[RMDB]
RNA sequence: GGGAACGACUCGAGUAGAGUCGAAAACCAACGUGGUUCGCCACGUUGGAAACAACAAAUACUGUCAGUUGAGACAGAGACAAAAACUGUCAGUGUAGACAGAAAGGCGGUCCUUCGGGACCGCCAACCAAGGAUGUAACUUCGGUUACAUCCUUGGAAAAGAAACAACAACAACAAC
Reactivity to 2A3 in 0.01 (KOAc 150mM, MgCl2 10mM, bicine 150mM(pH8.5), 24C), signal-to-noise 3, nucleotides 027 to 126: c000c000a000a000c000g000u000g000g030u070u060c130g090c060c000a000c010g000u000u000g000g030a030a030a010c040a020a010c000a000a130a060u140a170c000u010g000u000c010a120g050u110u090g150a070g040a080c040a020g070a000g120a020c060a020a110a000a040a040c010u010g000u000c000a020g110u050g050u240a060g040a040c020a010g090a100a080a000g000g000c000g000g000u010c010c000u050u160c200g030g000g000a010c000c030g000c000c000a000a000
Reactivity to DMS in 0.01 (KOAc 150mM, MgCl2 10mM, bicine 150mM(pH8.5), 24C), signal-to-noise 2, nucleotides 027 to 126: c020c000a000a000c030g010u010g000g010u000u000c150g040c000c000a000c020g020u020u000g000g000a020a100a130c080a070a060c110a080a050a100u010a120c000u000g000u000c000a080g000u010u000g020a280g020a020c020a010g000a200g010a070c140a060a030a070a040a070c010u010g000u000c000a160g030u010g010u010a140g000a030c040a000g000a060a070a060g000g010c000g000g000u000c000c010u000u000c210g030g000g010a000c000c000g030c000c000a000a010
An RNA of 177 nucleotides, treated with 2A3 and DMS and read out base by base. 2A3 adducts were read by reverse transcription with SuperScript II with manganese. DMS (dimethyl sulfate) methylates the pairing face of unpaired adenines and cytosines. DMS adducts were read by reverse transcription with MarathonRT. It was measured as part of the RMDB library M2PK50. For 2A3, 2,902 sequencing reads were counted. The RNA was probed in 150 mM KOAc, 10 mM MgCl2 and 150 mM bicine (pH 8.5) at 24 C.